The record gives the reactivity of an RNA of 177 nucleotides to 2A3 and DMS. The RNA was probed in 150 mM KOAc, 10 mM MgCl2 and 150 mM bicine (pH 8.5) at 24 C. For DMS the reverse transcriptase was MarathonRT.
RNA sequence: GGGAACGACUCGAGUAGAGUCGAAAAGUCGAAAUCUCUCUGUUGUGAAGUCAAACAUGAGUAUGAAUUAACAUUAAUGGAUCUUUUUGAUUCAUAAUACUCAUGUUUGGUUUCACAGUAGAUAGAUUUCAUAAUCUACAUUCGUGUAGAUUAUGAAAAAAGAAACAACAACAACAAC
Reactivity to 2A3 in 0.01 (KOAc 150mM, MgCl2 10mM, bicine 150mM(pH8.5), 24C), signal-to-noise 9, nucleotides 027 to 126: g140u090c050g030a050a040a050u000c000u000c000u000c000u000g010u020u000g000u010g000a000a000g010u010c000a000a000a000c000a000u000g000a000g000u010a010u040g110a100a090u160u170a170a050c070a100u110u230a100a040u050g010g010a010u010c030u040u250u130u150u300g000a000u000u000c000a000u030a050a000u000a000c000u000c000a000u000g000u000u000u000g000g000u000u000u000c000a000c000a000g000u000a000g000a000u000a000g000a000u000
Reactivity to DMS in 0.01 (KOAc 150mM, MgCl2 10mM, bicine 150mM(pH8.5), 24C), signal-to-noise 9, nucleotides 027 to 126: g010u020c080g000a020a020a010u000c000u000c050u000c000u000g000u010u000g010u000g000a010a010g010u000c000a000a010a000c000a000u000g000a020g010u000a000u000g010a140a110u020u030a100a140c220a120u020u030a140a050u000g000g000a010u000c000u000u020u030u030u020g000a010u000u000c000a010u000a110a020u000a010c000u000c000a000u000g000u000u000u000g000g000u000u000u000c000a000c000a000g010u000a000g000a010u000a010g000a010u000